This 177-nucleotide RNA was probed chemically with 2A3. 2A3 adducts were read by reverse transcription with SuperScript II with manganese. Values cover nucleotides 27 to 126. Conditions: 150 mM KOAc, 10 mM MgCl2 and 150 mM bicine (pH 8.5), 24 C. The 2A3 profile rests on 400 reads. As a SHAPE reagent, 2A3 marks flexible, mostly unpaired nucleotides at the ribose 2'-OH. Source: RMDB library OK1LIB, as collected in RNAgym.
[RMDB]
RNA sequence: GGGAACGACUCGAGUAGAGUCGAAAAGACGCUGAUGCGAUCGACUGUAAGAUAGAUAGACUGAGGAGACAGAUACGUACGGCAAGUAUCGUCGCCAGAAAUACAGUCGCAAAUUGCCGUACGAAGAAUCGGUCGCCUAUUUCGAUAGGCGACCGAUAAAAGAAACAACAACAACAAC
Reactivity to 2A3 in 0.01 (KOAc 150mM, MgCl2 10mM, bicine 150mM(pH8.5), 24C), signal-to-noise 1, nucleotides 027 to 126: g010a000c000g030c000u240g070a300u300g040c020g210a120u100c000g000a000c000u000g040u040a090a040g060a210u190a110g080a090u000a090g030a010c040u010g060a030g040g000a090g000a000c010a070g000a060u000a060c000g040u000a000c000g000g000c000a010a010g000u000a000u000c000g000u000c070g000c040c010a030g040a060a160a000u040a000c000a000g000u050c000g000c100a180a110a230u000u000g000c000c000g000u000a110c080g000a010a010g040a000